[RMDB]
RNA sequence: GGGAACGACUCGAGUAGAGUCGAAAAUAAGUGAUGCGGAUUUUGACAGAAACCGUGUGGUAAAAGUGCGGUCCUGUUUGGUAUGUAGUACAUCGGGGGCCGUAACCUCGUUACAGUAAUAACGACAGCAAAGCAACAAUUUCGAUUGUUGCUUUGCAAAAGAAACAACAACAACAAC
Reactivity to 2A3 in 0.01 (KOAc 150mM, MgCl2 10mM, bicine 150mM(pH8.5), 24C), signal-to-noise 2, nucleotides 027 to 126: u190a050a060g160u030g050a010u090g000c000g060g000a050u030u030u050u150g300a140c200a080g080a050a010a000c000c050g000u060g040u060g080g120u070a030a040a080a090g000u040g000c000g020g010u080c000c000u090g120u050u070u170g040g020u130a030u090g190u020a090g180u040a020c010a050u060c080g000g000g000g000g000c000c000g000u010a020a020c000c000u000c000g060u000u020a020c080a030g000u180a000a190u080a030a000c020g030a000c050a000
Reactivity to DMS in 0.01 (KOAc 150mM, MgCl2 10mM, bicine 150mM(pH8.5), 24C), signal-to-noise 2, nucleotides 027 to 126: u080a100a160g000u030g010a010u000g080c120g000g000a100u000u010u010u010g000a100c300a180g000a010a010a000c000c000g020u000g000u030g000g000u010a010a110a110a040g000u010g060c000g000g020u000c010c010u010g000u020u050u010g010g000u020a020u060g000u010a040g030u010a300c040a070u000c030g050g030g000g000g000c000c000g110u000a000a030c050c070u010c030g000u030u000a020c160a110g000u040a070a140u000a030a000c060g000a090c170a090